[RMDB]
An RNA of 177 nucleotides, treated with DMS and 2A3 and read out base by base. The 2A3 profile rests on 2,606 reads. It was measured as part of the RMDB library 15KREP. For DMS the reverse transcriptase was MarathonRT.
RNA sequence: GGGAACGACUCGAGUAGAGUCGAAAAUCUUCUCUCUUCACCCCGUCGAGUGUGACGAGGAGUGUUCUGAAGUAGAGGCUUCAGAUUUAGAAGAAGGUGAAUCAGAGUGCAUUUCUGAGACUUCAACGCAUAUCUAUCUCUUCGGAGAUAGAUAUGCAAAAGAAACAACAACAACAAC
Reactivity to DMS in 0.01 (KOAc 150mM, MgCl2 10mM, bicine 150mM(pH8.5), 24C), signal-to-noise 2, nucleotides 027 to 126: u000c010u000u000c010u000c130u000c040u000u000c060a180c020c000c000c040g000u000c010g010a180g060u010g040u030g020a010c010g010a060g010g000a100g020u010g010u000u010c010u000g000a030a010g040u010a120g020a200g010g000c000u010u000c010a010g000a050u000u020u000a020g010a030a030g000a030a030g000g020u000g010a130a120u000c010a040g000a030g040u000g000c230a220u000u020u000c010u000g010a040g000a160c130u000u000c100a090a140c260
Reactivity to 2A3 in 0.01 (KOAc 150mM, MgCl2 10mM, bicine 150mM(pH8.5), 24C), signal-to-noise 3, nucleotides 027 to 126: u030c010u030u000c020u000c000u000c010u040u060c010a020c000c000c000c000g000u020c010g030a200g210u260g090u200g070a010c000g000a170g020g010a160g020u020g030u030u000c000u000g010a020a000g010u100a090g070a110g300g000c000u010u000c000a020g000a040u010u070u130a020g010a030a010g000a010a000g020g010u040g050a010a060u010c010a020g000a010g010u130g130c050a120u030u120u060c000u010g020a020g040a050c010u050u050c060a050a040c100